[RMDB]
RNA sequence: GGGAACGACUCGAGUAGAGUCGAAAAUUCCCUUGACCGAGAGGUCUGGGUAAUCCUUUAAUACUCAUCGUGCUGGGGAUUGAUUCUUGUAAUUAUUAAUCAUGAACGAGGAAUUCCUAGUAAACGCCCAUUAAGGUGACUUCGGUCACCUUAAUGGAAAAGAAACAACAACAACAAC
Reactivity to 2A3 in 0.01 (KOAc 150mM, MgCl2 10mM, bicine 150mM(pH8.5), 24C), signal-to-noise 1, nucleotides 027 to 126: u030u040c000c000c000u000u100g020a000c000c000g010a030g040a040g060g010u000c020u000g030g010g000u030a060a120u080c000c000u050u050u130a220a090u160a140c080u050c090a160u140c060g020u010g070c030u000g000g000g000g010a010u030u020g130a100u060u140c020u040u020g050u030a090a080u040u160a050u100u120a080a040u120c080a060u090g060a030a010c010g000a020g030g000a000a030u000u000c030c010u000a000g020u010a020a300a000c010g020c000
Reactivity to DMS in 0.01 (KOAc 150mM, MgCl2 10mM, bicine 150mM(pH8.5), 24C), signal-to-noise 1, nucleotides 027 to 126: u000u010c000c000c000u000u000g010a040c000c000g010a300g010a210g000g010u000c000u000g000g000g030u000a140a150u010c030c000u000u000u000a080a170u000a070c080u010c100a110u010c080g030u000g000c030u000g000g000g020g010a030u000u010g000a100u000u000c010u000u000g010u000a070a050u000u000a260u030u000a090a130u000c100a040u010g000a210a110c120g040a010g010g000a040a050u000u000c020c010u000a040g010u010a030a100a090c070g000c300